This 170-nucleotide RNA was probed chemically with DMS and 2A3. Values cover nucleotides 27 to 129. The reactions ran in a buffer of 150 mM KOAc, 10 mM MgCl2 and 150 mM bicine (pH 8.5), at 24 C. High DMS reactivity at an A or C suggests that its Watson-Crick edge is free. For DMS, 57,764 sequencing reads were counted.
RNA sequence: GGGAACGACUCGAGUAGAGUCGAAAAUGUCCUCCUUCGGAUGCCCAGGUCGGACCGCGAGGAGGUGGAGAUGCCAUGCCGACCCGAAGAGGAAAGAAGGACGCGAGACGCAAACCUGUGAGUGGACUACCUGAAGGGUUCGCCCUUCAGAAAAGAAACAACAACAACAAC
Reactivity to DMS in 0.01 (KOAc 150mM, MgCl2 10mM, bicine 150mM(pH8.5), 24C), signal-to-noise 8, nucleotides 027 to 129: u060g000u010c020c010u010c050c030u030u060c000g000g030a100u030g000c040c030c000a080g020g010u030c050g020g030a040c040c080g000c110g010a060g000g000a010g010g020u000g010g010a010g000a030u060g010c030c040a000u000g040c000c000g000a050c020c030c050g000a090a090g020a050g040g000a050a040a040g000a070a050g000g000a060c080g030c090g010a020g030a070c080g000c130a050a090a110c010c010u000g000u050g020a050g040u030g000g020a120c060u040a080c120
Reactivity to 2A3 in 0.01 (KOAc 150mM, MgCl2 10mM, bicine 150mM(pH8.5), 24C), signal-to-noise 9, nucleotides 027 to 129: u200g040u030c010c000u050c000c030u080u080c020g050g020a050u110g060c000c010c020a050g040g110u060c030g010g020a070c000c010g030c030g020a040g000g010a010g020g010u030g010g020a110g000a030u130g030c020c010a020u080g000c000c010g000a020c000c000c010g020a040a020g020a020g020g030a020a010a020g040a010a020g020g010a010c010g030c020g040a120g010a020c040g010c070a060a090a120c010c000u050g000u010g040a020g010u040g000g010a030c030u050a060c010